[RMDB]
RNA sequence: GGGAACGACUCGAGUAGAGUCGAAAAGUAUGGAUGCCACCGUGACGGCUCAAUCACACAAGUGCCAACGAUCACGAGGCGCUCGCUAUUGCUGCGUAACUGACGGCCUGACGGUCUGACGUUACAAAAAACGAAAAGUGGUUCGCCACUUUUCGAAGAACACCGUUACGUUCGCGUAACGGUGUUCAAAAGAAACAACAACAACAAC
Reactivity to 2A3 in 0.01 (KOAc 150mM, MgCl2 10mM, bicine 150mM(pH8.5), 24C), signal-to-noise 2, nucleotides 027 to 156: g060u070a010u240g080g030a090u070g010c000c030a090c100c000g000u010g010a030c030g010g000c030u070c080a120a230u260c040a020c030a040c000a140a300g010u070g010c020c020a170a100c180g000a200u060c000a000c040g030a050g000g000c030g020c010u080c030g020c020u050a080u120u300g040c090u040g060c000g040u000a000a010c000u000g020a010c020g000g020c000c010u160g150a030c100g000g000u000c000u010g010a000c010g000u000u000a020c000a010a010a050a000a000a000c000g000a000a000a000a000g000u010g000g070u100u100c160g080c040c010a000c020u000u000u000u000c000g000a000a000